[RMDB]
RNA sequence: GGGAACGACUCGAGUAGAGUCGAAAAGUGAACGAUCUCGGUUGUUUCUCUGAAGGCAUGAUCACUCCGUCCGAUGCGGAAGUUCGUGCUUCCGUCGAACGCGAAAGUCGGACGGCGGCCAUGAGUCAAUAUGUUUAAGGCUUCGGCCUUAAACAAAACACAGACUCUAAUUCGUUAGAGUCUGUGUAAAAGAAACAACAACAACAAC
Reactivity to 2A3 in 0.01 (KOAc 150mM, MgCl2 10mM, bicine 150mM(pH8.5), 24C), signal-to-noise 7, nucleotides 027 to 156: g160u120g050a150a030c050g030a100u050c030u050c090g040g000u010u000g000u000u020u000c050u000c070u080g110a130a070g090g010c020a020u030g030a060u100c040a040c230u000c010c000g010u000c000c000g010a000u040g000c020g010g020a010a010g020u130u300c170g120u300g070c000u010u010c010c000g020u030c030g070a150a070c070g010c040g160a160a040a010g020u000c000g000g000a000c000g000g000c000g010g000c010c000a020u020g020a000g060u040c030a050a090u080a080u240g000u000u000u000a000a010g000g000c000u020u050c290g070g000c000c000u000u000a000a000a000c000a000a000a000
Reactivity to DMS in 0.01 (KOAc 150mM, MgCl2 10mM, bicine 150mM(pH8.5), 24C), signal-to-noise 2, nucleotides 027 to 156: g000u000g030a070a090c080g010a040u000c020u000c000g010g000u010u000g010u000u000u000c020u000c020u010g010a100a100g000g000c000a040u010g010a030u010c030a050c010u000c000c010g020u000c000c060g040a080u000g010c020g020g000a030a080g030u000u010c210g020u000g020c010u000u000c010c010g020u000c050g030a080a130c100g070c120g020a130a130a140g020u000c030g030g000a060c000g020g000c150g000g000c020c000a020u000g010a090g020u000c050a090a140u010a140u000g040u000u000u000a010a020g040g010c000u000u000c300g060g010c000c000u000u000a000a000a000c000a020a010a100